An RNA of 177 nucleotides, treated with DMS and 2A3 and read out base by base. The data come from the RNA Mapping Database (RMDB), library TTRDEL. For 2A3, 2,284 sequencing reads were counted.

RNA sequence: GGGAACGACUCGAGUAGAGUCGAAAAGAUAUGGAACAUGACCCGUUACGAAGCUCAACAGCUCGGAAACGAGACAUGAGCUAAGUAACGCAUGUUCCUAAGUCAAAGUGAAUCUUCGGAUUCACAACUCAGUGCGUGUGUUCGCACACGCACUGAGAAAAGAAACAACAACAACAAC
Reactivity to DMS in 0.01 (KOAc 150mM, MgCl2 10mM, bicine 150mM(pH8.5), 24C), signal-to-noise 1, nucleotides 027 to 126: g000a040u020a300u000g010g010a000a020c000a000u000g000a120c120c240c070g000u000u010a000c000g040a300a080g000c000u000c000a020a110c300a240g010c000u000c000g000g000a130a120a270c000g000a020g000a040c050a240u010g000a010g000c000u090a010a300g020u000a000a000c000g020c030a000u000g000u000u000c000c000u000a000a040g000u000c030a060a090a140g000u000g000a010a030u000c000u020u030c220g030g000a000u000u000c000a030c000a060a180
Reactivity to 2A3 in 0.01 (KOAc 150mM, MgCl2 10mM, bicine 150mM(pH8.5), 24C), signal-to-noise 1, nucleotides 027 to 126: g020a020u070a050u130g000g010a010a000c000a000u010g140a190c020c010c010g000u000u010a000c000g030a060a010g000c010u000c000a000a230c020a270g030c000u000c020g000g020a050a020a050c020g000a010g010a010c080a200u090g010a010g000c000u010a040a010g000u000a000a000c000g000c010a000u000g000u000u000c000c000u020a080a010g030u040c060a100a100a040g010u010g000a020a010u000c000u060u120c300g080g010a000u020u000c000a000c010a000a050